[RMDB]
RNA sequence: GGGAACGACUCGAGUAGAGUCGAAAAAGAAAGAACAAAGUCUGCAUAGUGUGUGAAGAUGUAUUGCAGUGUGCCGCAGCGCGUGGAGUUGUCGAGCAGAUAACGUCGAUCAAUGGAAUCCCAAUCCUAUCUAACAGGUUUUCGAACCUGUUAGAUAAAAAGAAACAACAACAACAAC
Reactivity to DMS in 0.01 (KOAc 150mM, MgCl2 10mM, bicine 150mM(pH8.5), 24C), signal-to-noise 8, nucleotides 027 to 126: a100g000a070a080a130g010a070a070c060a070a100a160g000u010c020u000g000c030a070u010a090g010u000g010u000g010u000g010a080a070g010a070u000g010u000a070u010u010g030c040a040g010u000g020u010g010c030c050g010c050a060g020c060g010c090g000u010g010g010a100g020u000u000g010u000c040g000a110g010c050a060g000a050u010a050a130c120g000u000c040g010a100u000c060a060a070u000g010g000a090a100u000c010c000c010a090a120u010c080c070
Reactivity to 2A3 in 0.01 (KOAc 150mM, MgCl2 10mM, bicine 150mM(pH8.5), 24C), signal-to-noise 4, nucleotides 027 to 126: a010g070a010a020a010g040a050a000c020a040a120a010g070u030c020u050g020c010a040u060a120g050u060g030u040g020u050g130a060a050g050a070u100g040u150a110u090u100g060c030a050g020u030g030u070g150c010c040g000c030a030g010c050g010c030g030u070g030g070a100g000u030u040g050u090c040g010a040g050c020a010g020a050u060a100a020c030g030u010c020g040a050u050c040a030a110u060g060g020a030a050u040c000c010c000a000a020u030c010c010
Chemical mapping of a 177-nucleotide RNA with DMS and 2A3. Reactivities are given for positions 27 through 126. In probing experiments dimethyl sulfate is read out at A N1 and C N3, which are open when not base-paired. It was measured as part of the RMDB library OK2TRN. For 2A3, 5,334 sequencing reads were counted.